Chemical mapping of a 177-nucleotide RNA with 2A3 and DMS. It was measured as part of the RMDB library M2PK90. Conditions: 150 mM KOAc, 10 mM MgCl2 and 150 mM bicine (pH 8.5), 24 C. Values cover nucleotides 27 to 126. For 2A3 the reverse transcriptase was SuperScript II with manganese. For 2A3, 2,458 sequencing reads were counted. For DMS, 2,625 sequencing reads were counted.
[RMDB]
RNA sequence: GGGAACGACUCGAGUAGAGUCGAAAAAGCAACGAGUGUGUGUGGGACGUUUUAUCCCAAGCUCUGAGUAGAGCACGCGCUCACACACACCGCGAGCGAGCAUCAGCUGAGCGCAAACGCUGGUAAAUAGGACAACUUAGUUCGCUAAGUUGUCCUAAAAAGAAACAACAACAACAAC
Reactivity to 2A3 in 0.01 (KOAc 150mM, MgCl2 10mM, bicine 150mM(pH8.5), 24C), signal-to-noise 3, nucleotides 027 to 126: a000g090c110a060a070c010g020a090g060u040g000u000g000u000g000u010g010g020g050a050c020g020u000u060u180u140a190u120c010c010c000a020a010g010c000u010c020u040g290a250g190u300a020g170a010g010c010a010c020g040c010g020c000u040c000a000c000a000c000a000c000a000c010c000g030c020g000a020g030c000g000a040g030c020a020u040c020a000g000c020u040g080a020g040c060g010c080a090a030a000c090g020c000u020g020g050u120a060a060a060
Reactivity to DMS in 0.01 (KOAc 150mM, MgCl2 10mM, bicine 150mM(pH8.5), 24C), signal-to-noise 3, nucleotides 027 to 126: a070g010c060a170a070c030g000a190g000u010g030u000g010u010g020u000g020g010g000a080c020g020u000u000u010u010a100u030c020c040c050a080a070g000c010u000c000u000g020a170g010u030a050g010a020g000c010a100c100g010c050g000c020u000c000a010c010a020c000a010c020a000c010c020g000c010g000a300g030c020g000a120g030c080a020u000c000a040g020c010u000g000a080g020c100g000c110a060a060a160c080g000c010u000g000g010u000a040a050a170